Chemical mapping of a 177-nucleotide RNA with DMS.
Conditions: 150 mM KOAc, 10 mM MgCl2 and 150 mM bicine (pH 8.5), 24 C.
Source: RMDB library OK2TST, as collected in RNAgym.
For DMS, 672 sequencing reads were counted.
Values cover nucleotides 27 to 126.
RNA sequence: GGGAACGACUCGAGUAGAGUCGAAAAUUGGUGAUCGCACAUUAGAUGUGAUUCGCCAAACCGCGCGUGACCGUCAGUUAACCUUGUGGCAGUCAACCCGUGCCAUGUUGCAGGAAAAAGUGCUGGCGAAAGGACUGCUGUUCGCAGCAGUCCUUUCAAAAGAAACAACAACAACAAC
Reactivity to DMS in 0.01 (KOAc 150mM, MgCl2 10mM, bicine 150mM(pH8.5), 24C), signal-to-noise 1, nucleotides 027 to 126: u010u000g010g010u000g030a080u000c040g030c000a020c040a300u000u000a070g000a100u000g010u010g030a060u000u000c060g040c040c010a000a030a230c040c040g000c160g030c080g000u000g030a110c050c010g030u000c040a090g040u000u000a090a150c040c080u000u000g000u030g000g000c050a060g000u010c150a080a160c020c020c010g040u000g010c000c030a030u010g000u000u000g030c080a080g000g010a060a060a020a130a110g000u020g000c060u000g010g000c250